[RMDB]
RNA sequence: GGGAACGACUCGAGUAGAGUCGAAAAUGUUGUGCCCCAGCUCACUGGUGGCUCUGUCUACAAAUAUGCUUCCUUUCAGGUGGAGAACGACCAGGAGCGGUUCCUGAGUGACCUGCGUCGUGAUGUCCUUCCUGGCGAGAUUCGUCUCGCCAGGAAGAAAAGAAACAACAACAACAAC
Reactivity to DMS in 0.01 (KOAc 150mM, MgCl2 10mM, bicine 150mM(pH8.5), 24C), signal-to-noise 1, nucleotides 027 to 126: u000g000u020u000g010u000g000c020c000c000c050a110g040c110u000c110a130c110u000g000g020u010g000g000c030u000c010u020g010u010c080u000a090c130a010a070a120u000a040u030g000c070u000u000c060c050u000u010u000c170a040g010g000u000g020g000a090g030a070a090c050g000a030c000c000a000g000g030a300g000c000g000g010u000u000c000c030u000g010a110g000u000g000a120c020c010u010g000c180g030u010c050g010u000g000a130u000g000u000c060